An RNA of 207 nucleotides, treated with 2A3 and read out base by base. Reactivities are given for positions 27 through 156. The RNA was probed in 150 mM KOAc, 10 mM MgCl2 and 150 mM bicine (pH 8.5) at 24 C. For 2A3, 730 sequencing reads were counted.
RNA sequence: GGGAACGACUCGAGUAGAGUCGAAAAGUAUGGAUGCCACCGUGACGGCUCAAUCACACUAGUGCCAACGAUAACGAGGCGCUCGCUAUUGCUGCGUAACUGACGGCCUGACGGUCUGACGUUACAAAAAACGAAAAGUGGUUCGCCACUUUUCGAACUUACCUGGAUGCUUCGGCAUCCAGGUAAGAAAAGAAACAACAACAACAAC
Reactivity to 2A3 in 0.01 (KOAc 150mM, MgCl2 10mM, bicine 150mM(pH8.5), 24C), signal-to-noise 2, nucleotides 027 to 156: g080u060a060u080g030g080a080u120g060c000c000a080c100c060g100u060g030a080c070g000g000c010u000c010a020a070u130c020a060c050a020c080u110a000g010u020g000c030c000a110a040c110g090a220u080a090a050c090g010a100g080g000c020g030c000u080c020g000c010u070a050u200u300g100c120u110g000c020g000u010a000a000c000u010g010a000c000g000g010c000c010u150g170a050c080g000g000u000c000u020g030a000c020g020u000u000a000c000a020a000a040a010a020a020c010g000a000a000a000a000g010u010g000g000u040u010c120g000c070c020a020c010u000u000u030u000c000g000a000a010